[RMDB]
RNA sequence: GGGAACGACUCGAGUAGAGUCGAAAAGACGCGAGAGACGCGAGACGCGCAAUGGCAGAAGCCGCAAUAGAUCAUACGACGCAAGAGGCAAGACGGAGAGCGCGCAACUUGCAUGAAUAACCAAGAACAUGGUGCAUACGUUCGCGUAUGCACCAUGAAAAGAAACAACAACAACAAC
Reactivity to 2A3 in 0.01 (KOAc 150mM, MgCl2 10mM, bicine 150mM(pH8.5), 24C), signal-to-noise 3, nucleotides 027 to 126: g060a000c050g030c030g030a060g010a000g050a150c000g000c000g020a040g040a030c010g020c000g000c110a080a130u080g020g000c000a000g080a100a020g010c000c010g060c060a040a110u060a100g050a030u080c040a040u080a100c050g030a010c070g050c010a030a030g040a020g080g000c010a040a000g000a010c060g080g050a090g010a020g060c020g000c010g000c010a010a070c000u000u020g000c000a060u100g090a030a040u280a030a010c000c020a000a040g020a050a000
Reactivity to DMS in 0.01 (KOAc 150mM, MgCl2 10mM, bicine 150mM(pH8.5), 24C), signal-to-noise 2, nucleotides 027 to 126: g010a080c060g000c050g030a180g010a110g040a110c130g000c050g000a120g000a120c080g000c050g000c050a100a090u010g010g000c080a080g030a070a130g010c020c020g010c040a140a060u090a080g010a190u010c090a110u030a050c110g000a080c080g000c050a050a090g020a100g040g050c020a010a080g020a130c150g000g020a060g000a060g010c010g000c090g000c010a180a020c060u000u000g000c050a110u030g020a070a050u050a050a030c200c040a070a190g000a090a210
This 177-nucleotide RNA was probed chemically with 2A3 and DMS. For DMS, 2,324 sequencing reads were counted. The 2A3 profile rests on 2,983 reads. The data come from the RNA Mapping Database (RMDB), library OK1LIB. Values cover nucleotides 27 to 126. 2A3 adducts were read by reverse transcription with SuperScript II with manganese. For DMS the reverse transcriptase was MarathonRT. Values are in units of 0.01, from 0 to 300, in steps of 10.